Chemical mapping of a 177-nucleotide RNA with DMS and 2A3. The 2A3 profile rests on 785 reads. Reactivities are given for positions 27 through 126. For DMS the reverse transcriptase was MarathonRT.
RNA sequence: GGGAACGACUCGAGUAGAGUCGAAAAGCGCAAGGGAUGCGCAAGUGAAAGGAAGGGAAGGAAGGGAUAGUUGACCGCGCAACUGGCCAGUCACCUGACGCGGGCGCUAACACUAGCCCAACAGCAGAUGCUGCCUAUCGUUCGCGAUAGGCAGCAUAAAAGAAACAACAACAACAAC
Reactivity to DMS in 0.01 (KOAc 150mM, MgCl2 10mM, bicine 150mM(pH8.5), 24C), signal-to-noise 2, nucleotides 027 to 126: g000c050g000c000a070a100g050g000g000a070u030g020c020g000c020a030a030g030u000g010a050a230a040g000g000a050a040g000g000g000a170a070g000g000a050a040g000g000g010a070u000a030g040u010u010g020a070c070c090g000c060g000c030a000a100c060u000g010g010c020c020a050g000u020c290a120c110c040u000g000a240c010g050c060g010g000g000c050g000c070u060a050a100c210a050c100u000a080g000c010c020c010a110a080c090a030g000c190a100g000
Reactivity to 2A3 in 0.01 (KOAc 150mM, MgCl2 10mM, bicine 150mM(pH8.5), 24C), signal-to-noise 2, nucleotides 027 to 126: g000c000g040c020a020a080g150g010g050a080u070g000c020g000c020a010a000g080u090g020a160a000a000g060g080a010a010g000g050g000a000a060g100g020a120a000g080g050g000a070u020a000g000u070u090g120a040c050c000g000c000g030c010a000a140c110u030g000g080c060c000a000g030u050c040a030c140c050u030g040a090c000g000c020g030g020g000c000g010c100u080a070a000c010a020c050u040a000g000c000c000c010a070a000c030a020g160c010a030g000